[RMDB]
RNA sequence: GGGAACGACUCGAGUAGAGUCGAAAAUACAUAUGGCCGAGUGGAUCAUAUAUGGCCGUACGAUCGAUCGUACGCUGGUACAGGUACUGGCGCUGUGCGGCCUGACGGUACGUACCACUGCGCGCGCGCAGUAUGCAGCUUUCGAGCUGCAUACUGCAAAAGAAACAACAACAACAAC
Reactivity to DMS in 0.01 (KOAc 150mM, MgCl2 10mM, bicine 150mM(pH8.5), 24C), signal-to-noise 9, nucleotides 027 to 126: u020a120c140a100u010a090u010g010g000c020c010g010a070g020u000g010g010a220u000c040a050u000a070u010a100u000g010g010c020c010g030u000a010c010g010a110u010c160g010a100u010c120g020u000a100c010g010c020u000g010g010u000a050c080a120g010g000u000a010c010u010g010g010c010g020c110u000g010u000g000c010g000g000c010c000u010g000a080c270g010g000u000a030c110g010u010a190c010c010a020c020u000g010c030g020c110g020c030g010c170
Reactivity to 2A3 in 0.01 (KOAc 150mM, MgCl2 10mM, bicine 150mM(pH8.5), 24C), signal-to-noise 9, nucleotides 027 to 126: u170a020c040a030u190a110u190g120g000c000c010g010a010g020u040g020g030a060u060c050a000u070a020u030a050u190g000g000c010c010g000u000a010c020g050a100u180c040g030a080u070c050g050u060a020c100g050c140u030g070g070u140a110c070a120g170g020u030a010c030u080g040g000c020g000c050u060g010u020g020c010g000g000c020c000u010g020a010c070g050g020u080a030c050g040u040a100c000c010a020c020u160g100c070g000c010g000c010g010c030